[RMDB]
RNA sequence: GGGAACGACUCGAGUAGAGUCGAAAACCAGGCCGUCCCCUCUUCUAGAGAAGGGAGACUCCGGAACUUCUUCCAUGAUUGGGACGAAGCCGCCACCGGGCGCUCCCCUCGGAGGUCCCUCGAGGGGUUACUCGACACUUCGGUGUCGAGAAAAGAAACAACAACAACAAC
Reactivity to 2A3 in 0.01 (KOAc 150mM, MgCl2 10mM, bicine 150mM(pH8.5), 24C), signal-to-noise 6, nucleotides 027 to 129: c010c000a010g010g080c030c040g090u080c010c010c000c010u000c030u130u020c030u090a070g020a030g050a170a130g030g010g010a020g030a070c000u000c010c010g000g040a010a010c000u010u010c000u040u010c010c010a070u160g040a230u300u300g070g000g000a020c070g030a020a000g030c050c010g050c030c000a130c050c040g080g010g000c060g020c010u030c020c000c000c000u020c010g010g010a010g010g070u030c000c020c000u020c010g010a010g000g000g000g020u000u030a020
Reactivity to DMS in 0.01 (KOAc 150mM, MgCl2 10mM, bicine 150mM(pH8.5), 24C), signal-to-noise 5, nucleotides 027 to 129: c030c000a100g030g030c010c100g050u030c010c000c010c000u020c000u030u050c120u020a100g010a030g060a190a040g060g040g020a030g000a100c060u020c030c040g010g010a080a040c030u010u020c030u000u050c020c010a110u000g020a150u090u060g040g010g020a010c150g000a010a040g020c140c000g030c080c050a160c090c120g050g030g040c090g000c080u020c000c000c000c000u010c030g000g040a050g020g000u040c040c000c030u030c050g020a000g010g060g040g010u000u000a000
Chemical mapping of a 170-nucleotide RNA with 2A3 and DMS. For 2A3, 12,278 sequencing reads were counted. The DMS profile rests on 15,783 reads. The data come from the RNA Mapping Database (RMDB), library 15KLIB.